[RMDB]
RNA sequence: GGGAACGACUCGAGUAGAGUCGAAAAGAUAUGGACGACCUACCCACCACGCGUCGGGUAUCUCGGAAACGAGCCGAGCCCGACCGUGAGGGUCGUCCUAAGUCAAAGCACUUCUUCGGAAGUGCAACGAAGAAGGGCAGUUCGCUGCCCUUCUUCGAAAAGAAACAACAACAACAAC
Reactivity to 2A3 in 0.01 (KOAc 150mM, MgCl2 10mM, bicine 150mM(pH8.5), 24C), signal-to-noise 1, nucleotides 027 to 126: g150a060u230a260u300g000g010a020c000g000a000c080c000u280a300c110c050c020a010c010c030a000c020g060c220g000u010c020g000g090g020u150a230u070c030u010c010g040g070a240a300a220c150g010a120g070c050c070g020a020g040c020c020c000g010a000c000c010g010u010g010a010g010g020g000u000c000g000u040c000c010u000a010a000g030u000c100a120a020a020g040c000a000c000u000u030c000u060u130c280g090g020a000a010g000u020g000c000a020a000
Reactivity to DMS in 0.01 (KOAc 150mM, MgCl2 10mM, bicine 150mM(pH8.5), 24C), signal-to-noise 1, nucleotides 027 to 126: g020a120u010a110u010g000g010a040c060g010a020c020c060u000a180c000c000c020a300c130c020a010c010g040c130g000u000c000g000g010g000u000a060u030c000u020c000g000g020a100a100a100c170g000a020g140c220c090g000a090g010c000c000c000g020a000c000c000g000u000g000a130g020g000g000u000c000g020u000c040c000u000a020a040g050u000c080a030a140a160g000c000a000c000u000u000c000u010u040c090g050g000a020a000g080u000g000c000a000a060